This 177-nucleotide RNA was probed chemically with 2A3 and DMS. The reactions ran in a buffer of 150 mM KOAc, 10 mM MgCl2 and 150 mM bicine (pH 8.5), at 24 C. The 2A3 profile rests on 1,112 reads. For 2A3 the reverse transcriptase was SuperScript II with manganese. Values cover nucleotides 27 to 126.
RNA sequence: GGGAACGACUCGAGUAGAGUCGAAAAGCUGCCCUGACGUACGGCGAACUCGCGCAGCAACACCGGGUAGCGCCACUCCAGCACCUCGGGAUCGGUGAGCCGGGAGUUGGUCAUGUGCGUCUGCACCAAGACGCCUUCUUUUCGAAGAAGGCGUCUUAAAAGAAACAACAACAACAAC
Reactivity to 2A3 in 0.01 (KOAc 150mM, MgCl2 10mM, bicine 150mM(pH8.5), 24C), signal-to-noise 1, nucleotides 027 to 126: g080c070u140g060c000c000c020u010g010a020c000g020u010a020c040g010g010c020g030a060a070c020u040c000g190c020g000c130a100g000c000a000a110c000a010c040c000g000g000g040u050a040g060c000g030c080c050a040c040u020c030c000a060g040c040a060c010c040u070c040g060g060g060a150u130c080g020g000u070g010a000g080c060c020g030g020g010a040g020u050u050g120g030u020c050a080u270g040u030g040c010g000u020c010u000g090c030a100c050c040
Reactivity to DMS in 0.01 (KOAc 150mM, MgCl2 10mM, bicine 150mM(pH8.5), 24C), signal-to-noise 1, nucleotides 027 to 126: g020c180u020g000c020c060c050u030g000a020c010g010u010a020c030g000g020c000g000a030a070c010u020c010g000c060g000c110a180g010c080a080a080c080a130c040c020g020g010g020u000a070g000c050g010c050c070a060c120u010c060c050a110g010c040a070c050c010u010c030g020g000g000a090u000c130g020g010u000g010a200g010c040c030g000g000g010a020g000u000u000g030g010u000c010a100u010g040u000g000c050g000u000c020u010g010c030a080c110c120